[RMDB]
RNA sequence: GGGAACGACUCGAGUAGAGUCGAAAAACUAGUAUGUACAGGGGUGAGUUGACCUGUCAUCUAGACUGCUGACCAUCAACUCACCGGUCAGCUGGAUGAUGUCCGCAGAGUACGACAUCAGUACUCAGUGUUAUGACUAGUUCGCUGGUCGUAACACAAAAGAAACAACAACAACAAC
Reactivity to DMS in 0.01 (KOAc 150mM, MgCl2 10mM, bicine 150mM(pH8.5), 24C), signal-to-noise 9, nucleotides 027 to 126: a210c000u000a010g000u040a010u000g010u070a010c000a020g000g010g010g010u020g010a070g020u000u010g000a060c020c020u000g000u000c000a010u000c010u000a010g010a180c060u010g000c010u000g000a020c010c070a150u020c100a050a050c070u010c060a080c160c130g000g000u000c000a010g000c000u010g000g010a110u010g000a080u010g000u000c010c030g000c150a100g000a050g010u000a030c040g000a120c170a090u030c110a100g010u000a020c010u000c020a150
Reactivity to 2A3 in 0.01 (KOAc 150mM, MgCl2 10mM, bicine 150mM(pH8.5), 24C), signal-to-noise 9, nucleotides 027 to 126: a000c000u010a010g060u150a070u060g070u090a010c010a010g040g030g030g060u140g090a150g050u060u070g100a080c000c010u000g000u000c000a000u000c000u010a020g070a120c040u030g000c000u000g000a000c010c010a050u110c040a050a100c060u030c090a060c040c020g000g000u000c000a000g000c010u020g030g010a050u080g010a020u070g070u050c030c020g010c100a020g010a010g060u040a020c040g080a030c080a150u100c050a050g010u020a020c010u000c030a010